[RMDB]
RNA sequence: GGGAACGACUCGAGUAGAGUCGAAAAAUCAGAGGCUGGCUGACAGCCGUCCCUGGUAGGUGUCCCCAUCAGGGAUAGGGUGGUUCCUGGCGAGGGUGUCACUGACAAGUCCCCUUGUUUGUGCCCGCAGAGGAUCAGCACUGCCAGUGGAGAUGGGAUACUUCAUAAGUUUCGACUUAUGAAGUAUAAAAGAAACAACAACAACAAC
Reactivity to 2A3 in 0.01 (KOAc 150mM, MgCl2 10mM, bicine 150mM(pH8.5), 24C), signal-to-noise 5, nucleotides 027 to 156: a000u100c060a040g050a030g120g000c030u030g040g000c050u090g120a110c050a040g080c000c000g010u020c000c000c000u010g030g020u060a260g010g040u120g070u210c020c030c000c000a020u050c010a020g010g020g030a020u090a140g090g000g010u040g000g030u040u020c000c010u010g040g030c020g030a220g060g020g010u140g110u190c020a010c030u020g020a010c010a030a020g190u220c020c040c010c000u000u010g010u010u030u070g020u030g000c010c040c000g010c020a040g040a070g120g000a020u050c040a000g050c020a010c070u040g000c010c010a030g020u070g090g050a100g010a040u090g040g030g020
Reactivity to DMS in 0.01 (KOAc 150mM, MgCl2 10mM, bicine 150mM(pH8.5), 24C), signal-to-noise 3, nucleotides 027 to 156: a090u000c010a100g010a140g020g020c020u010g040g000c030u000g010a120c060a130g030c000c010g000u000c000c010c010u000g040g040u000a030g010g010u000g000u000c080c010c010c020a070u000c040a040g020g010g010a050u000a030g040g000g020u000g020g020u000u000c020c010u000g020g030c040g000a100g000g010g010u000g000u010c030a060c060u000g030a050c070a050a120g000u010c090c130c110c030u000u000g010u000u000u010g010u000g000c010c020c010g010c060a100g010a070g020g000a050u000c050a110g020c070a110c040u000g020c000c010a050g020u000g010g000a130g010a100u000g010g010g020